[RMDB]
An RNA of 207 nucleotides, treated with 2A3 and read out base by base.
The reactions ran in a buffer of 150 mM KOAc, 10 mM MgCl2 and 150 mM bicine (pH 8.5), at 24 C.

RNA sequence: GGGAACGACUCGAGUAGAGUCGAAAACUGCAGGUCAACGGAGCAUCUUCAGAUCAGCUAUUGCAGAAGAAAGGUCAGCCAAGCGCUCUGGGCCUGCUCGACUGUAUAUAGGAGCUUCUGAUUUCAACCAGAAGCUAACUCUCUCCGAAACAAUGAGAUACUACUGCCGUUUCGACGGCAGUAGUAUAAAAGAAACAACAACAACAAC
Reactivity to 2A3 in 0.01 (KOAc 150mM, MgCl2 10mM, bicine 150mM(pH8.5), 24C), signal-to-noise 1, nucleotides 027 to 156: c020u020g000c000a000g000g000u000c000a040a100c070g120g000a010g000c020a000u040c020u080u020c020a010g000a300u070c020a000g120c130u170a250u220u250g030c050a010g020a170a000g020a010a170a000g020g060u050c030a000g020c020c060a170a000g150c030g000c000u100c000u010g000g000g060c000c000u000g000c000u000c000g070a050c010u060g110u100a020u020a020u170a260g000g080a000g010c000u040u000c000u040g060a150u140u160u250c100a150a130c030c000a010g000a010a010g000c000u010a070a000c000u000c040u000c000u000c060c060g170a080a050a030c040a060a030u140g000a110g030